[RMDB]
RNA sequence: GGGAACGACUCGAGUAGAGUCGAAAAGGAAAUAUGAUCUUCGGAUCAUAUUUCCAAAGAUAUGGAACCUAUCACGAGCUGUGUUCGGAAACGAACAUACAGCGAUGAGUGACGGUUCCUAAGUCAAAAGCACUUCGGAAGUUCGCUUCCGAAGUGCGAUCAAAGCGGUAUUCGUACCGCUUUGAUCAAAAGAAACAACAACAACAAC
Reactivity to DMS in 0.01 (KOAc 150mM, MgCl2 10mM, bicine 150mM(pH8.5), 24C), signal-to-noise 3, nucleotides 027 to 156: g010g020a010a010a010u000a000u000g000a010u000c010u000u000c300g050g020a020u000c010a000u010a010u000u000u010c000c000a020a020a070g000a060u000a030u000g000g000a030a010c000c000u000a300u000c010a010c010g010a070g010c000u000g010u010g010u000u000c010g050g010a040a020a100c020g020a020a020c000a070u000a090c100a020g030c010g020a120u000g010a300g000u000g010a050c270g010g010u000u010c000c030u000a000a090g020u010c020a100a070a150a250g020c020a010c000u010u010c000g000g020a050a020g010u000u000c300g010c010u000u000c000c000g020a010a000g020u000g000c000
Reactivity to 2A3 in 0.01 (KOAc 150mM, MgCl2 10mM, bicine 150mM(pH8.5), 24C), signal-to-noise 6, nucleotides 027 to 156: g010g000a000a000a000u000a010u010g010a010u010c030u110u180c300g030g000a000u000c000a000u000a000u000u000u000c000c000a010a000a000g000a000u010a000u020g000g000a000a000c000c000u030a050u080c010a010c050g080a030g010c010u000g000u000g000u030u000c000g000g000a010a000a000c000g010a000a020c020a050u230a100c030a000g010c020g070a170u210g080a020g000u000g000a000c000g000g000u000u000c000c000u000a000a000g000u000c000a050a020a060a110g000c000a000c000u000u000c000g000g010a010a010g020u060u140c210g120c160u000u000c000c000g000a000a000g000u000g000c000
This 207-nucleotide RNA was probed chemically with DMS and 2A3. Values are in units of 0.01, from 0 to 300, in steps of 10. The DMS profile rests on 7,113 reads. For 2A3 the reverse transcriptase was SuperScript II with manganese.